[RMDB]
RNA sequence: GGGAACGACUCGAGUAGAGUCGAAAAAGGCUCCGCCGUAGAAGGUAAAAGCCCUGUAAACGAAAAGGAAAGCUUUAAGGUCUAAUCCAGAGUACCACGAGACACGUGAAACCUUGUGGGAAGCAGGUGUUAGUACCCGAUUCGUCGGGUACUAACAAAAAGAAACAACAACAACAAC
Reactivity to 2A3 in 0.01 (KOAc 150mM, MgCl2 10mM, bicine 150mM(pH8.5), 24C), signal-to-noise 1, nucleotides 027 to 126: a020g020g010c000u030c050c000g000c020c010g030u030a010g040a220a060g000g020u070a090a120a040a030g020c000c000c030u020g110u060a050a080a040c040g070a000a080a140a000g000g050a160a050a000g050c020u020u050u140a130a030g080g040u030c020u060a060a040u000c010c000a000g050a010g110u000a010c000c000a010c010g020a000g020a010c040a010c160g170u190g080a030a050a070c010c000u000u020g000u010g010g030g010a010a000g100c100a070g030g010
Reactivity to DMS in 0.01 (KOAc 150mM, MgCl2 10mM, bicine 150mM(pH8.5), 24C), signal-to-noise 2, nucleotides 027 to 126: a080g010g040c020u010c040c220g010c020c000g030u010a140g020a160a100g000g020u010a110a120a090a110g000c040c010c070u010g000u010a050a080a160c090g000a070a040a080a100g000g020a090a160a080g020c030u000u000u020a070a050g000g010u000c010u010a100a110u000c000c010a050g020a170g010u010a170c030c000a050c010g000a000g000a070c100a100c130g000u000g000a130a070a060c140c000u010u000g040u010g010g000g010a130a170g030c100a040g010g010